[RMDB]
RNA sequence: GGGAACGACUCGAGUAGAGUCGAAAAAGAAAAGAGCGAGCCUCCCAGUUUUCGAGUAGUCCCGGACCUAUCUAAAUUGGAGUCAUCCGACCGUAUGGAGAAAAUUUCCGACAAGAGGUGAUCCACUAACCCGCAGACUUCGGUCUGCGGAAAAGAAACAACAACAACAAC
Reactivity to 2A3 in 0.01 (KOAc 150mM, MgCl2 10mM, bicine 150mM(pH8.5), 24C), signal-to-noise 2, nucleotides 027 to 129: a000g080a000a000a000a010g060a000g090c020g000a030g000c000c000u000c000c000c000a040g000u040u000u010u190c020g020a030g000u030a000g010u020c080c000c000g000g000a040c000c000u030a080u040c090u100a190a100a030u210u110g010g000a060g130u080c020a010u000c030c000g010a040c060c010g040u030a180u120g040g020a010g050a020a130a010a020u070u070u070c010c070g000a050c020a020a070g030a010g030g000u010g000a040u000c010c020a010c050u020a040a010c000
Reactivity to DMS in 0.01 (KOAc 150mM, MgCl2 10mM, bicine 150mM(pH8.5), 24C), signal-to-noise 2, nucleotides 027 to 129: a070g000a110a140a000a070g050a160g010c130g000a020g000c130c010u060c030c010c030a050g040u000u000u040u000c090g050a050g040u060a060g040u050c010c050c000g060g010a060c180c200u030a080u130c080u040a030a140a110u070u050g020g000a070g000u120c020a000u000c060c040g000a150c140c010g000u000a050u000g080g070a010g040a110a170a050a070u000u000u040c010c050g050a050c190a070a060g000a060g030g050u000g030a110u000c010c010a060c080u010a060a080c080